[RMDB]
Conditions: 150 mM KOAc, 10 mM MgCl2 and 150 mM bicine (pH 8.5), 24 C. Structure probing data (DMS and 2A3) for a 177-nucleotide construct. Values cover nucleotides 27 to 126. 2A3 adducts were read by reverse transcription with SuperScript II with manganese. For 2A3, 27,395 sequencing reads were counted. It was measured as part of the RMDB library OK2TST.
RNA sequence: GGGAACGACUCGAGUAGAGUCGAAAACUAUUUGACCACUACAUGGCCUCUCUCAGUAAAUACGACGAAUGGAGAUCCUAUCUUAACUGUUCGGUACCAUGUGUGUCAUCUUGCUCAUAGGCAUACGCGUUACAAUGUGAUUCGUCACAUUGUAACGAAAAGAAACAACAACAACAAC
Reactivity to DMS in 0.01 (KOAc 150mM, MgCl2 10mM, bicine 150mM(pH8.5), 24C), signal-to-noise 9, nucleotides 027 to 126: c050u000a050u010u000u000g010a060c090c100a070c070u010a070c040a070u000g000g010c220c060u010c040u000c080u000c030a050g010u000a060a060a060u010a060c210g000a060c060g010a060a100u010g010g020a100g010a110u000c050c050u000a070u000c080u000u010a090a090c040u010g010u000u000c160g010g010u000a060c040c030a030u000g020u000g020u000g000u000c030a020u000c060u000u000g020c030u000c130a090u010a070g010g010c060a080u000a080c240g010
Reactivity to 2A3 in 0.01 (KOAc 150mM, MgCl2 10mM, bicine 150mM(pH8.5), 24C), signal-to-noise 6, nucleotides 027 to 126: c020u030a100u080u040u070g050a030c040c030a020c090u150a010c020a030u030g020g010c030c020u040c010u000c000u010c030a010g020u080a030a100a070u150a080c120g030a010c040g060a120a090u160g070g020a080g010a060u040c010c020u060a050u020c080u080u100a100a090c020u030g040u080u040c050g010g000u030a060c010c010a030u030g010u000g010u010g010u030c000a020u000c010u030u100g010c010u030c090a160u120a110g090g000c030a040u070a120c100g010